Background:
An RNA of 177 nucleotides, treated with 2A3 and DMS and read out base by base. 2A3 adducts were read by reverse transcription with SuperScript II with manganese. Conditions: 150 mM KOAc, 10 mM MgCl2 and 150 mM bicine (pH 8.5), 24 C.
[RMDB]
RNA sequence: GGGAACGACUCGAGUAGAGUCGAAAAGCCGGAUAACGUCCGGCGGGGGCGACCCCAGGGAAAGUGCCACAGAGAGCAAACCGCCAUGCCUUGCAUGGUAAGGGUGAAAGGGUGGGGUAAGAGCCCAUAAACAGCCUGUAUUCGUACAGGCUGUUUAAAAAGAAACAACAACAACAAC
Reactivity to 2A3 in 0.01 (KOAc 150mM, MgCl2 10mM, bicine 150mM(pH8.5), 24C), signal-to-noise 3, nucleotides 027 to 126: g000c000c000g010g030a060u060a200a060c060g100u020c000c000g000g000c000g000g000g000g000g000c000g010a070c000c000c010c030a010g020g010g020a070a160a050g080u080g050c040c010a080c040a060g100a030g010a010g080c030a040a020a050c010c000g000c010c010a000u020g010c020c090u180u300g010c010a010u010g000g000u050a100a150g020g020g010u100g030a080a030a060g120g000g050u080g000g010g020g000u000a010a010g040a020g150c040c010c000a000
Reactivity to DMS in 0.01 (KOAc 150mM, MgCl2 10mM, bicine 150mM(pH8.5), 24C), signal-to-noise 4, nucleotides 027 to 126: g030c010c000g000g010a010u010a100a100c120g010u010c010c000g000g010c000g010g000g000g000g000c130g000a150c020c000c010c030a110g000g000g010a060a080a090g000u020g010c030c020a110c090a130g020a180g000a220g000c030a000a080a030c030c010g000c000c000a010u000g010c000c170u010u050g010c020a020u010g000g000u000a020a070g000g000g000u000g000a080a080a190g000g000g010u010g010g000g000g000u010a060a120g000a100g000c000c000c000a140